[RMDB]
RNA sequence: GGGAACGACUCGAGUAGAGUCGAAAAAUAAACCAUGGCCUUCAUCAGCUAAUGAUGGAGAUCAUGUGACCUGGAUCGAUCUCGUGACAGGCGACGAGGAAAGCGCCUCAGUAACCGGUCCCAUGUGCAUCUGCCCGUGGUUCGCCACGGGCAGAUGAAAAGAAACAACAACAACAAC
Reactivity to 2A3 in 0.01 (KOAc 150mM, MgCl2 10mM, bicine 150mM(pH8.5), 24C), signal-to-noise 2, nucleotides 027 to 126: a000u100a000a000a000c020c000a010u000g000g000c050c000u020u020c000a000u000c010a050g150c240u300a300a070u050g000a000u000g000g000a000g000a000u000c000a000u010g000u010g030a020c000c000u010g000g010a000u010c060g020a020u000c010u000c120g170u040g060a100c060a060g020g010c000g010a110c040g010a120g060g140a070a020a000g000c000g000c000c000u040c020a090g000u070a060a090c040c000g000g000u020c000c080c000a080u180g140u210g100
The data come from the RNA Mapping Database (RMDB), library OK1LIB. This 177-nucleotide RNA was probed chemically with 2A3. The reactions ran in a buffer of 150 mM KOAc, 10 mM MgCl2 and 150 mM bicine (pH 8.5), at 24 C. The 2A3 profile rests on 569 reads.